[RMDB]
The record gives the reactivity of an RNA of 207 nucleotides to DMS and 2A3.
It was measured as part of the RMDB library M2RFPK.
2A3 adducts were read by reverse transcription with SuperScript II with manganese.
DMS adducts were read by reverse transcription with MarathonRT.
RNA sequence: GGGAACGACUCGAGUAGAGUCGAAAAGGUGCUCUGAACGGAGUGCUCUACUGAGAUUAUAAAAUAGAAGGUAAGCUAUUAUCUCUUACAACAGGGCAGGGCUUGUUGGAAUAGGCGGUAAAGUCUAAAAACUACCUCACCUUCGGGUGAGGUAGAAGUAUAAACAUGUGUUCGCACAUGUUUAUACAAAAGAAACAACAACAACAAC
Reactivity to DMS in 0.01 (KOAc 150mM, MgCl2 10mM, bicine 150mM(pH8.5), 24C), signal-to-noise 1, nucleotides 027 to 156: g030g030u000g010c000u000c000u000g010a140a200c290g020g020a050g010u000g020c040u000c040u010a100c030u000g020a140g040a130u000u000a120u010a090a130a100a100u000a050g000a090a060g010g020u000a060a060g010c150u000a050u000u000a010u000c020u000c010u010u000a070c010a020a090c080a060g000g000g010c030a080g030g010g030c070u000u000g060u010u000g000g030a120a060u000a060g020g030c000g000g040u000a060a110a090g020u000c040u000a070a040a030a090a140c020u010a000c000c000u010c000a010c000c030u010u000c300g060g030g060u000g010a000g000g010u000a000g010a010a070
Reactivity to 2A3 in 0.01 (KOAc 150mM, MgCl2 10mM, bicine 150mM(pH8.5), 24C), signal-to-noise 3, nucleotides 027 to 156: g000g000u040g000c010u010c020u040g070a130a030c070g030g030a010g020u020g000c000u040c040u080a040c040u030g020a010g020a060u120u110a080u230a140a090a060a030u110a070g050a070a030g070g040u090a050a020g010c030u020a070u170u060a040u090c020u000c010u050u040a060c030a140a080c020a060g010g010g010c010a010g020g030g000c040u020u030g020u030u030g020g020a080a030u030a020g020g000c040g020g050u130a120a060a020g000u000c030u060a050a020a010a030a020c000u000a000c000c000u000c000a000c000c010u030u020c170g080g000g010u000g010a000g000g000u000a000g000a000a000